[RMDB]
RNA sequence: GGGAACGACUCGAGUAGAGUCGAAAAUGAUUUUCCAGCAUUUUAACUUAAUGCAUACCCGGACAGUGGCGCAAAACGUGGCGUUUAGCCUGAAAGCGGCUGGCUGGGAACGCAGCAAAAUCGCGCCGCAGUGGUGGUGCUUCGGCACCACCACUGCAAAAGAAACAACAACAACAAC
Reactivity to 2A3 in 0.01 (KOAc 150mM, MgCl2 10mM, bicine 150mM(pH8.5), 24C), signal-to-noise 1, nucleotides 027 to 126: u210g180a130u040u040u000u040c000c000a000g020c000a010u000u000u000u270a200a090c080u030u190a110a000u030g000c030a060u030a240c040c000c000g000g000a000c070a020g030u220g140g300c020g000c000a020a120a000a010c060g040u120g030g000c000g000u140u300u300a110g000c000c010u000g080a190a000a000g000c000g000g000c000u000g000g000c000u000g000g000g000a100a000c130g020c000a010g110c140a000a000a080a000u080c080g000c030g000c030c000
Record summary
The record gives the reactivity of an RNA of 177 nucleotides to 2A3. Source: RMDB library OK1LIB, as collected in RNAgym. 2A3 adducts were read by reverse transcription with SuperScript II with manganese. The 2A3 profile rests on 366 reads. Conditions: 150 mM KOAc, 10 mM MgCl2 and 150 mM bicine (pH 8.5), 24 C.